An RNA of 177 nucleotides, treated with DMS and read out base by base. The data come from the RNA Mapping Database (RMDB), library TTRINS.

RNA sequence: GGGAACGACUCGAGUAGAGUCGAAAAGAUAUGGAGAAAUCAGUUAGAGCGUUCCGUGAACUACGUCUUAUGUUCGGAAACGAACAUUUGACGCACGGAGACGCUCUAACUGAUUUCUCCUAAGUCACUGUGUUGGUAAGUUCGCUUACCAACACAGAAAAGAAACAACAACAACAAC
Reactivity to DMS in 0.01 (KOAc 150mM, MgCl2 10mM, bicine 150mM(pH8.5), 24C), signal-to-noise 1, nucleotides 027 to 126: g000a030u020a300u000g020g010a020g010a000a000a000u000c000a010g010u000u000a040g000a010g020c000g020u010u010c000c000g000u010g010a100a160c160u030a300c030g010u020c000u030u000a000u000g020u000u010c010g000g020a120a100a300c000g000a000a000c000a010u000u000u000g000a000c020g010c020a000c000g000g000a110g010a030c000g010c000u020c000u010a000a000c000u000g000a000u000u010u000c000u030c000c000u010a000a080g000u010c040a230
For DMS the reverse transcriptase was MarathonRT. The RNA was probed in 150 mM KOAc, 10 mM MgCl2 and 150 mM bicine (pH 8.5) at 24 C.